Annotation: An RNA of 207 nucleotides, treated with DMS and 2A3 and read out base by base. The reactions ran in a buffer of 150 mM KOAc, 10 mM MgCl2 and 150 mM bicine (pH 8.5), at 24 C. The DMS profile rests on 8,248 reads. 2A3 adducts were read by reverse transcription with SuperScript II with manganese.

RNA sequence: GGGAACGACUCGAGUAGAGUCGAAAACAUUACAGCUGCCACUGCACACCACAGGCUCCCUUCACCCAUGGCAUGCCCUCAACACCACCACUGCACUCUGCACGCCAUAGGUUUCAUCCCAGCUGCUCUUCUCAUCUCCAUGGUUCCAGGGACCCCAACCCAAUAUACCAUUCGUGGUAUAUUGGGUAAAAGAAACAACAACAACAAC
Reactivity to DMS in 0.01 (KOAc 150mM, MgCl2 10mM, bicine 150mM(pH8.5), 24C), signal-to-noise 3, nucleotides 027 to 156: c040a110u000u010a070c050a090g020c030u010g000c040c040a090c080u010g010c000a100c060a110c030c020a080c050a100g000g000c020u010c020c000c040u010u000c050a070c060c020c010a090u010g020g040c050a070u000g010c020c020c020u010c040a060a090c050a080c040c030a060c040c020a080c060u000g020c020a070c070u000c040u000g030c010a100c040g000c020c010a060u000a070g020g010u000u000u000c020a110u010c000c030c030a120g000c030u000g010c030u000c040u000u000c020u000c020a090u000c020u000c020c030a100u000g000g000u000u000c020c030a080g000g010g010a170c020c000c010c010a060
Reactivity to 2A3 in 0.01 (KOAc 150mM, MgCl2 10mM, bicine 150mM(pH8.5), 24C), signal-to-noise 6, nucleotides 027 to 156: c030a060u130u220a050c040a040g020c010u050g030c020c010a050c030u060g030c050a040c010a030c060c030a040c040a110g040g000c060u050c000c010c000u060u080c050a050c010c000c000a030u020g020g020c020a020u070g030c010c020c010u060c030a050a070c030a050c050c020a030c010c010a040c040u030g000c030a030c050u050c040u070g000c030a020c060g030c010c010a060u070a080g050g000u020u090u110c050a060u060c020c000c010a010g010c020u040g010c010u020c020u110u040c030u010c020a150u040c020u020c030c000a040u050g040g000u060u030c020c000a020g030g020g040a070c010c080c070c000a010